RNA sequence: GGGAACGACUCGAGUAGAGUCGAAAACUACACGGGAGGAGGAAUCUGAGGCUGAGAGGUUCAGCAACUGCCUGGGGUCACAAGCUAGUGCCAGGCUCUGUUCCCAGCACAUGUCACCCUGACCCCUGCUCUCUGCAGCAUGUGAAGAUUGACAGGGCACCGCUGUACAUUUCGAUGUACAGCGGUGAAAAGAAACAACAACAACAAC
Reactivity to 2A3 in 0.01 (KOAc 150mM, MgCl2 10mM, bicine 150mM(pH8.5), 24C), signal-to-noise 1, nucleotides 027 to 156: c020u100a020c050a000c020g060g000g000a060g010g010a020g000g030a060a040u060c050u050g000a080g100g000c010u010g000a020g000a000g190g000u050u100c030a030g000c030a000a100c080u160g020c020c040u020g000g000g000g050u060c020a000c050a060a010g060c050u100a020g020u020g040c040c010a000g000g000c050u020c020u050g020u000u000c000c000c000a000g010c040a040c010a070u260g010u130c000a050c020c040c000u030g030a070c000c000c000c010u010g000c010u040c000u000c020u050g050c050a030g000c000a060u120g060u060g110a070a070g030a180u040u060g000a060c030a030g000g000g000